Source: RMDB library OK2TST, as collected in RNAgym. Structure probing data (2A3 and DMS) for a 177-nucleotide construct. The 2A3 profile rests on 1,476 reads. For DMS, 850 sequencing reads were counted.
RNA sequence: GGGAACGACUCGAGUAGAGUCGAAAAGAGCUCAGACUUAACCCAGGCCUGACUCCAAAGCCUAUACUCUGAAUCACCAAGCGAGACCUAUUUUAAAGGUGACCAGGUCGUGAGAUAUGAUCUCAGCCUACCUGUGCGUAUUCGUACGCACAGGUAGAAAAGAAACAACAACAACAAC
Reactivity to 2A3 in 0.01 (KOAc 150mM, MgCl2 10mM, bicine 150mM(pH8.5), 24C), signal-to-noise 2, nucleotides 027 to 126: g030a020g010c070u030c090a010g020a150c060u060u060a090a080c020c040c010a030g010g050c020c010u020g020a060c000u010c000c040a060a080a050g010c010c010u070a070u100a120c040u090c020u080g040a050a020u060c000a010c050c020a070a040g090c030g080a040g000a020c000c030u020a080u090u230u040u210a120a190a010g000g020u030g000a030c040c030a020g000g060u030c030g060u050g020a090g020a010u100a090u270g130a080u040c000u000c000a030g000c000
Reactivity to DMS in 0.01 (KOAc 150mM, MgCl2 10mM, bicine 150mM(pH8.5), 24C), signal-to-noise 1, nucleotides 027 to 126: g010a060g000c170u000c030a030g010a040c010u010u010a200a130c070c020c040a110g010g010c030c010u010g000a070c020u010c010c060a080a120a100g020c040c000u020a130u010a070c090u010c030u000g010a140a200u000c030a030c000c030a110a100g000c120g010a040g010a040c040c040u020a070u030u000u000u000a050a070a040g010g000u010g010a070c060c040a060g030g000u010c150g010u010g030a080g000a030u000a080u000g010a100u010c000u010c030a180g000c150